The record gives the reactivity of an RNA of 177 nucleotides to 2A3 and DMS. The data come from the RNA Mapping Database (RMDB), library TTRDEL. Reactivities are given for positions 27 through 126. The DMS profile rests on 3,793 reads. For 2A3, 3,792 sequencing reads were counted. For 2A3 the reverse transcriptase was SuperScript II with manganese.
RNA sequence: GGGAACGACUCGAGUAGAGUCGAAAAGAUAUGGAUCACUUGUCAGCGAGUAGGUUCGGAAACGAACCUAGUCGCUUGGAUUUAGUGAGUCCUAAGUCAAAGUACCGUGCGUUCGCGCACGGUACAACAGUAUAAUCUCGUUCGCGAGAUUAUACUGAAAAGAAACAACAACAACAAC
Reactivity to 2A3 in 0.01 (KOAc 150mM, MgCl2 10mM, bicine 150mM(pH8.5), 24C), signal-to-noise 2, nucleotides 027 to 126: g040a030u050a030u180g030g010a020u010c020a010c000u000u030g030u050c010a000g010c020g000a050g300u000a000g010g010u000u000c000g010g060a060a070a030c020g000a000a040c000c000u020a010g060u000c010g000c000u000u030g010g000a010u200u140u220a000g020u010g030a010g230u120c010c000u030a120a060g040u030c060a150a100a080g000u000a010c000c010g000u020g000c000g000u020u060c300g000c010g000c200a000c000g040g000u000a000c000a000a000
Reactivity to DMS in 0.01 (KOAc 150mM, MgCl2 10mM, bicine 150mM(pH8.5), 24C), signal-to-noise 3, nucleotides 027 to 126: g000a030u000a300u000g010g010a230u000c000a000c000u000u000g000u000c000a010g000c010g000a020g010u010a010g000g010u000u010c000g000g010a120a080a200c000g000a020a000c000c000u000a000g000u000c000g000c000u000u000g010g010a020u000u010u000a010g020u000g000a030g010u000c000c030u010a040a160g020u010c040a110a160a160g010u010a000c010c010g000u000g000c000g020u000u010c220g030c010g020c000a000c010g010g020u000a000c000a020a090
Conditions: 150 mM KOAc, 10 mM MgCl2 and 150 mM bicine (pH 8.5), 24 C.